[RMDB]
Source information:
An RNA of 177 nucleotides, treated with 2A3 and read out base by base. Conditions: 150 mM KOAc, 10 mM MgCl2 and 150 mM bicine (pH 8.5), 24 C. It was measured as part of the RMDB library RFM100.
RNA sequence: GGGAACGACUCGAGUAGAGUCGAAAAUAAGGCACAUACGAAAGAGGAAUUCCUAGUAAGUGUGUAUCAACAAUGGAUAUUGAAUAAGUCCCUGUAGCUUGUACACACCGCCCGUCACUAUCUCAGAGCGCGAGUAGGAAUUCGUUCCUACUCGCGCAAAAGAAACAACAACAACAAC
Reactivity to 2A3 in 0.01 (KOAc 150mM, MgCl2 10mM, bicine 150mM(pH8.5), 24C), signal-to-noise 1, nucleotides 027 to 126: u130a080a020g000g000c040a030c060a210u080a040c110g020a010a130a000g000a020g000g070a090a010u100u000c000c000u010a030g010u040a130a000g000u000g000u000g050u020a040u190c050a000a060c100a080a000u000g000g050a010u010a120u300u020g200a250a040u230a270a040g040u110c000c000c000u020g100u000a030g050c170u000u030g040u000a000c000a000c000a000c010c000g090c000c010c020g150u170c000a000c000u040a060u020c000u000c040a050g040a090